[RMDB]
RNA sequence: GGGAACGACUCGAGUAGAGUCGAAAAGGGCAUAUUGAACAAAUUGACACACCAGAAGGAUUUAAAAAUAAUCCUCAAAGUGAAUUUGUUAAACAAUUUAUGGGUAGUCAUUUAGAAGAUGAUGCGCCCGCAUAGCGGGGUUCGCCCCGCUAUGCGGAAAAGAAACAACAACAACAAC
Reactivity to 2A3 in 0.01 (KOAc 150mM, MgCl2 10mM, bicine 150mM(pH8.5), 24C), signal-to-noise 1, nucleotides 027 to 126: g080g000g060c080a130u160a060u120u110g000a000a000c010a000a020a070u110u200g060a080c060a000c070a000c080c130a080g100a060a060g040g000a000u000u000u150a090a110a000a000a070u200a130a000u000c000c000u000c000a050a070a020g000u060g000a060a080u000u000u000g020u000u110a040a110a000c000a150a140u160u050u050a100u040g070g030g000u000a000g000u060c000a000u070u070u100a250g080a300a090g000a000u040g000a000u030g090c040g000c040

The data come from the RNA Mapping Database (RMDB), library OK1LIB. This 177-nucleotide RNA was probed chemically with 2A3. As a SHAPE reagent, 2A3 marks flexible, mostly unpaired nucleotides at the ribose 2'-OH. For 2A3 the reverse transcriptase was SuperScript II with manganese.